Source information
An RNA of 177 nucleotides, treated with DMS and read out base by base. The reactions ran in a buffer of 150 mM KOAc, 10 mM MgCl2 and 150 mM bicine (pH 8.5), at 24 C. DMS adducts were read by reverse transcription with MarathonRT.
[RMDB]
RNA sequence: GGGAACGACUCGAGUAGAGUCGAAAAGAUAUGGAGAUAUCUUACGGGAGCAGUUUAGUCGGAAACGACUAGCCUGCGAGGAUCGUAAGAGUAUCUCCUAAGUCAAACGAUCCCUUCGGGGAUCGAACAUGCCAAACUACUUCGGUAGUUUGGCAUGAAAAGAAACAACAACAACAAC
Reactivity to DMS in 0.01 (KOAc 150mM, MgCl2 10mM, bicine 150mM(pH8.5), 24C), signal-to-noise 1, nucleotides 027 to 126: g000a040u000a300u000g000g000a000g020a000u000a030u000c000u000u000a000c000g010g000g000a040g030c000a000g000u010u000u000a020g000u010c000g030g000a180a070a220c000g010a010c000u000a000g000c120c000u020g030c000g030a040g030g020a060u020c000g000u010a010a000g000a100g000u000a010u000c000u000c000c010u010a020a040g000u000c060a130a140a300c000g000a000u010c000c000c000u000u000c300g080g000g000g000a000u000c000g020a050a220